[RMDB]
This 207-nucleotide RNA was probed chemically with 2A3.
RNA sequence: GGGAACGACUCGAGUAGAGUCGAAAAAUCAGCCUUCGUUCUGUAAACGGGGUUGGAUCCGACUCUCAUAGGCUCUCCAACCCAACUCCUACUCAAUACGUCCUCGUAGUACAGAACGGUAACAUGUAAAACGAAGGCUGCUUCGGCAGCCUUCGAACAGUUCAAUGUCGUUCGCGACAUUGAACUGAAAAGAAACAACAACAACAAC
Reactivity to 2A3 in 0.01 (KOAc 150mM, MgCl2 10mM, bicine 150mM(pH8.5), 24C), signal-to-noise 1, nucleotides 027 to 156: a000u060c040a050g080c000c030u030u030c010g000u000u010c000u020g010u010a050a080a130c190g040g000g000g000u000u000g020g000a100u300c000c020g120a080c000u060c000u040c100a270u170a300g000g000c000u000c000u000c000c000a010a010c000c000c000a010a010c000u000c000c010u030a010c000u000c060a060a070u130a230c120g170u160c070c040u190c140g010u010a050g050u000a010c020a000g020a000a000c020g030g000u010a040a030c030a160u150g010u300a050a050a000a050c000g000a000a000g000g000c000u000g030c010u000u030c020g080g000c000a000g060c000c000u000u020c010g000a000a030

2A3 adducts were read by reverse transcription with SuperScript II with manganese. The reactions ran in a buffer of 150 mM KOAc, 10 mM MgCl2 and 150 mM bicine (pH 8.5), at 24 C.